[RMDB]
RNA sequence: GGGAACGACUCGAGUAGAGUCGAAAAGAUAUGGAACUCGUCCGCUCGUGGACCAACAGCCAUGGAGCUACUGCUCGGAAACGAGCAGUAGCUCCAUGGACAUGGUCGGCGACGAGGUUCCUAAGUCGCCAUCCAUGUACUUCGGUACAUGGAUGGCAAAAGAAACAACAACAACAAC
Reactivity to DMS in 0.01 (KOAc 150mM, MgCl2 10mM, bicine 150mM(pH8.5), 24C), signal-to-noise 1, nucleotides 027 to 126: g010a090u000a280u030g020g010a020a060c020u000c010g000u000c150c140g030c030u020c220g000u000g090g020a030c010c000a010a060c300a180g000c010c010a000u000g020g020a020g040c000u000a030c000u000g000c010u030c010g010g000a040a170a200c010g000a020g000c010a020g020u010a010g000c000u000c000c000a000u000g000g000a010c070a030u000g000g000u000c000g010g020c010g000a030c010g000a010g010g010u000u010c000c010u010a060a140g020u000c080